[RMDB]
RNA sequence: GGGAACGACUCGAGUAGAGUCGAAAAAGCAACGAGUGUGUGUCGGACGUUUUAUCCCAAGCUCUGAGUAGAGCACGCGCUCACACACACCGCGAGCGAGCAUCAGCAGAGCGCAAACGCUGGUAAAGCGUACUGCGGUGUUCGCACCGCAGUACGCAAAAGAAACAACAACAACAAC
Reactivity to DMS in 0.01 (KOAc 150mM, MgCl2 10mM, bicine 150mM(pH8.5), 24C), signal-to-noise 2, nucleotides 027 to 126: a040g000c050a180a150c040g000a210g020u020g000u000g030u000g000u000c140g030g000a050c020g000u000u000u040u020a130u010c030c020c030a080a100g000c000u000c010u010g000a150g000u000a050g000a030g000c010a120c140g010c000g010c010u000c020a070c030a030c050a000c030a020c040c070g010c030g010a190g010c040g010a060g010c060a020u000c010a070g000c020a020g010a250g000c060g080c150a030a110a120c080g000c030u040g000g040u030a070a070a170
Reactivity to 2A3 in 0.01 (KOAc 150mM, MgCl2 10mM, bicine 150mM(pH8.5), 24C), signal-to-noise 2, nucleotides 027 to 126: a000g130c080a040a040c020g050a120g020u000g000u000g000u000g010u060c100g000g020a030c040g020u000u020u110u260a140u060c050c020c010a060a000g000c000u000c000u060g280a280g130u240a010g170a000g040c010a000c000g070c000g000c000u030c000a000c000a000c000a000c010a020c000c020g070c040g010a010g010c060g010a010g050c000a070u020c000a020g000c010a000g040a010g100c060g000c080a120a030a000c050g000c010u040g090g080u160a020a050a020

The data come from the RNA Mapping Database (RMDB), library M2PK90.
Structure probing data (DMS and 2A3) for a 177-nucleotide construct.
For 2A3 the reverse transcriptase was SuperScript II with manganese.
DMS adducts were read by reverse transcription with MarathonRT.
Reactivities are given for positions 27 through 126.